About this RNA:
Structure probing data (2A3) for a 177-nucleotide construct. Values cover nucleotides 27 to 126. For 2A3, 459 sequencing reads were counted. For 2A3 the reverse transcriptase was SuperScript II with manganese. The reactions ran in a buffer of 150 mM KOAc, 10 mM MgCl2 and 150 mM bicine (pH 8.5), at 24 C.

RNA sequence: GGGAACGACUCGAGUAGAGUCGAAAAGAAUGUCUUUACGUACUUAUGUCCUUGAGUAUGAGGACGGGGCCACACCGCCGUUACUCCUAUCCCGGCAGGGGACUCGGAGUUAUCUUGACCGAGACACACGCGACGGAUGAUUCGUCAUCCGUCGCGUAAAAGAAACAACAACAACAAC
Reactivity to 2A3 in 0.01 (KOAc 150mM, MgCl2 10mM, bicine 150mM(pH8.5), 24C), signal-to-noise 2, nucleotides 027 to 126: g080a000a020u150g100u100c020u110u090u050a080c000g000u010a030c000u160u100a140u250g110u110c000c000u000u120g100a160g170u110a010u300g000a050g060g070a000c080g030g000g000g060c050c000a070c000a000c160c050g030c020c000g060u040u020a100c000u020c060c040u000a000u020c020c000c000g270g000c120a200g000g010g060g000a030c020u000c060g000g050a060g000u000u120a120u130c070u020u050g010a030c020c020g000a000g000a080c000a000c000